[RMDB]
Source information
Chemical mapping of a 177-nucleotide RNA with DMS and 2A3. Reactivities are given for positions 27 through 126. The RNA was probed in 150 mM KOAc, 10 mM MgCl2 and 150 mM bicine (pH 8.5) at 24 C. DMS adducts were read by reverse transcription with MarathonRT.
RNA sequence: GGGAACGACUCGAGUAGAGUCGAAAAGGGUGGCCACGGCUACACCGAGCUUUUGCGGCCAGUUGGGAAGCGAGGCGGGGCUGUUCGUGGAUGUGCUCCACCUCGCCGUGAAGCUGCUUUGCCGGCGAGGGGGACAGGGCUUCGGCCCUGUCCCCCUAAAAGAAACAACAACAACAAC
Reactivity to DMS in 0.01 (KOAc 150mM, MgCl2 10mM, bicine 150mM(pH8.5), 24C), signal-to-noise 1, nucleotides 027 to 126: g060g000g070u000g020g000c060c000a040c070g010g040c100u030a070c000a080c050c050g040a110g020c020u000u000u000u000g010c000g000g010c040c010a060g000u000u000g050g010g000a300a120g000c000g000a010g000g010c130g000g000g000g010c020u000g000u000u020c080g030u020g000g000a080u000g040u020g040c020u020c000c000a070c000c000u000c000g000c000c010g000u000g010a120a130g020c020u000g000c110u020u000u010g010c000c000g010g000c120g020
Reactivity to 2A3 in 0.01 (KOAc 150mM, MgCl2 10mM, bicine 150mM(pH8.5), 24C), signal-to-noise 1, nucleotides 027 to 126: g050g000g010u090g000g000c040c020a040c100g060g030c070u070a000c090a100c030c020g000a000g000c000u000u060u180u270g000c000g010g000c000c000a070g070u190u220g020g030g000a070a000g010c060g010a010g020g000c010g000g000g020g020c010u160g030u140u140c100g020u100g090g040a110u100g070u160g050c000u030c000c000a020c000c000u000c010g000c000c000g000u060g030a020a020g070c040u050g000c040u100u080u080g030c000c000g020g000c030g050